[RMDB]
RNA sequence: GGGAACGACUCGAGUAGAGUCGAAAAUGAGAUAACUGACACGCCGGAAGCGAUGAGGUCAGCAUUCCCAAAUUCAGAGAAGUACAGAUGGUAUGGGGAUUGCGCAAGGCCUGAAACAAUAAGCCAUAUACGCCGAUCUGGAUUCGACAUUCAUCCGCGCCUGUAGCUAGUUCGCUAGCUACAGGCGAAAAGAAACAACAACAACAAC
Reactivity to 2A3 in 0.01 (KOAc 150mM, MgCl2 10mM, bicine 150mM(pH8.5), 24C), signal-to-noise 1, nucleotides 027 to 156: u030g010a070g040a020u120a220a080c000u060g030a000c000a080c130g070c040c020g160g040a030a030g120c050g030a020u090g040a050g220g000u000c030a030g040c010a050u000u000c000c010c000a050a000a000u020u050c010a000g010a000g010a070a070g040u070a130c050a020g050a130u000g050g000u120a070u030g040g000g000g050a090u030u150g050c030g000c110a070a050g050g000c010c110u050g070a140a050a000c010a010a050u180a140a000g000c030c030a050u090a060u000a080c070g060c090c020g040a000u020c000u050g000g010a040u040u000c020g010a000c060a070u030u130c090a100u060c070c070g000
Chemical mapping of a 207-nucleotide RNA with 2A3. For 2A3, 520 sequencing reads were counted. 2A3 adducts were read by reverse transcription with SuperScript II with manganese. The data come from the RNA Mapping Database (RMDB), library OK3TST. The RNA was probed in 150 mM KOAc, 10 mM MgCl2 and 150 mM bicine (pH 8.5) at 24 C.